RNA sequence: GGGAACGACUCGAGUAGAGUCGAAAAGCGUAACGGCUGGGUGUAACCCAACUCUAGGUAUGCUGAUUAGCGGGCUUGACUCCGUAACAAAUAGGCACUGGUGGUAAAAAGCAUCCCACCUACUCACAAAGCUCCAAAUUCUUCGGAAUUUGGAGAAGGAAACACAGAAGUUCGCUUCUGUGUUUCCAAAAGAAACAACAACAACAAC
Reactivity to DMS in 0.01 (KOAc 150mM, MgCl2 10mM, bicine 150mM(pH8.5), 24C), signal-to-noise 1, nucleotides 027 to 156: g080c020g020u000a030a080c050g020g050c010u010g010g070g070u000g060u000a070a300c010c020c020a050a090c060u000c090u000a100g020g000u030a030u000g000c040u020g000a170u000u000a060g020c020g010g010g030c050u000u000g020a140c080u000c000c020g010u000a060a200c080a020a050a100u010a060g000g030c060a060c050u010g000g040u000g020g010u010a020a060a100a090a180g020c030a060u010c050c000c010a120c080c020u010a050c040u000c060a090c060a110a060a180g020c000u000c000c000a030a000a000u000u000c000u000u000c300g040g000a010a000u000u000u000g010g000a020g020a020a030
Reactivity to 2A3 in 0.01 (KOAc 150mM, MgCl2 10mM, bicine 150mM(pH8.5), 24C), signal-to-noise 3, nucleotides 027 to 156: g030c010g010u020a020a040c030g060g000c050u020g000g000g010u070g080u140a130a110c000c010c020a080a080c040u040c050u090a010g070g020u070a040u110g020c010u000g020a110u050u060a000g040c010g000g020g000c030u070u160g030a080c020u000c030c010g010u030a030a010c010a020a050a060u170a080g040g000c050a000c070u030g020g010u010g010g020u050a090a140a050a030a010g020c010a030u080c020c000c010a000c010c000u050a080c020u040c040a080c060a060a100a040g010c010u030c000c000a010a000a010u000u000c000u020u040c140g080g000a000a000u010u000u000g000g000a000g010a000a000